[RMDB]
RNA sequence: GGGAACGACUCGAGUAGAGUCGAAAAGAUAUGGAUGUCCGCUGCCGAUGAAAGCUUUCGGAAACGAAAGCUGGAGGAACUACAGCCAGGACAUCCUAAGUCAAAGUGAGGAGUUCGCUCCUCACAAGGCUCUUACAUGGUUCGCCAUGUAAGAGCCAAAAGAAACAACAACAACAAC
Reactivity to 2A3 in 0.01 (KOAc 150mM, MgCl2 10mM, bicine 150mM(pH8.5), 24C), signal-to-noise 1, nucleotides 027 to 126: g030a030u090a020u170g010g000a010u010g000u020c010c000g000c030u010g040c050c060g300a300u060g020a020a000a010g000c010u030u040u000c020g010g000a090a030a010c010g000a000a000a000g000c010u000g010g000a000g010g010a080a030c070u240a110c120a030g040c110c090a150g030g000a000c000a000u020c000c000u000a030a020g020u020c070a150a060a000g000u010g000a000g000g000a000g000u050u080c200g170c140u000c010c000u010c000a000c000a000a020
Reactivity to DMS in 0.01 (KOAc 150mM, MgCl2 10mM, bicine 150mM(pH8.5), 24C), signal-to-noise 1, nucleotides 027 to 126: g010a050u000a150u000g000g000a020u000g000u000c010c000g000c020u000g030c010c030g030a080u030g000a300a110a020g000c000u000u000u000c000g000g000a030a030a190c000g000a000a000a020g000c000u010g010g020a090g020g000a100a040c060u030a230c000a000g020c000c080a120g070g000a000c000a000u000c000c000u000a010a110g010u010c020a080a060a150g000u010g020a050g000g000a020g010u000u030c160g000c010u000c000c000u000c000a010c000a090a070

Conditions: 150 mM KOAc, 10 mM MgCl2 and 150 mM bicine (pH 8.5), 24 C.
The record gives the reactivity of an RNA of 177 nucleotides to 2A3 and DMS.
For DMS the reverse transcriptase was MarathonRT.
High DMS reactivity at an A or C suggests that its Watson-Crick edge is free.
Source: RMDB library TTRDEL, as collected in RNAgym.
For DMS, 1,114 sequencing reads were counted.